[RMDB]
RNA sequence: GGGAACGACUCGAGUAGAGUCGAAAAAAAAAGAUAUGGAGACGUGAACUACAAGGACGAAACCUCCAACAGCUCGGAAACGAGACAUGGAGACUGACGGUACUUGCACGUCUCCUAAGUCAAAAAAUCAUUGCGUAUACUUCGGUAUACGCAAUGAAAAAGAAACAACAACAACAAC
Reactivity to DMS in 0.01 (KOAc 150mM, MgCl2 10mM, bicine 150mM(pH8.5), 24C), signal-to-noise 1, nucleotides 027 to 126: a130a060a050a120a050g010a100u000a300u000g010g000a010g010a030c000g000u000g040a150a010c050u000a300c030a000a020g000g000a290c080g000a080a190a030c080c030u000c000c000a030a090c300a120g000c000u000c040g000g000a100a060a150c000g000a000g000a010c090a070u000g000g000a000g020a050c160u010g030a160c000g000g070u020a090c030u000u000g010c000a000c000g010u000c000u010c040c010u010a000a010g000u000c030a000a000a050a030a030a170

Structure probing data (DMS) for a 177-nucleotide construct. For DMS, 642 sequencing reads were counted. Conditions: 150 mM KOAc, 10 mM MgCl2 and 150 mM bicine (pH 8.5), 24 C. For DMS the reverse transcriptase was MarathonRT. Values are in units of 0.01, from 0 to 300, in steps of 10.